[RMDB]
RNA sequence: GGGAACGACUCGAGUAGAGUCGAAAAGUGGGGGUGGCGGCGCGCAGGUCGACGACCAGAUCGCACAGCGGAUUGUCGGGUUCGUGACCGACGGCGCUGACCACGGGCGUACGGCAGGCCGCGAUCGAUUCGAAAAGGAAUUCGUUCCUUUUCGAAUAAAAGAAACAACAACAACAAC
Reactivity to 2A3 in 0.01 (KOAc 150mM, MgCl2 10mM, bicine 150mM(pH8.5), 24C), signal-to-noise 5, nucleotides 027 to 126: g090u060g010g020g000g000g000u020g020g000c020g000g010c020g000c020g000c040a020g000g040u020c010g090a040c010g020a020c000c010a030g020a100u110c030g010c070a120c050a140g050c060g100g070a220u100u150g070u060c050g040g000g000u160u150c070g040u090g080a070c010c000g020a030c020g020g010c010g000c020u010g030a040c020c000a010c020g000g010g000c020g040u150a130c030g030g000c010a020g060g000c000c010g020c020g010a070u100c050g020
Reactivity to DMS in 0.01 (KOAc 150mM, MgCl2 10mM, bicine 150mM(pH8.5), 24C), signal-to-noise 9, nucleotides 027 to 126: g020u010g000g010g000g010g030u000g010g010c030g010g000c020g010c040g010c080a140g000g010u000c010g010a050c030g010a060c020c010a120g000a050u000c060g010c060a210c150a120g010c030g010g000a140u010u010g020u000c050g010g000g000u000u000c090g020u010g000a060c010c010g000a070c150g010g000c010g010c010u000g010a120c030c030a060c060g000g000g000c050g010u010a080c070g010g010c060a080g000g000c040c030g010c050g000a070u000c090g000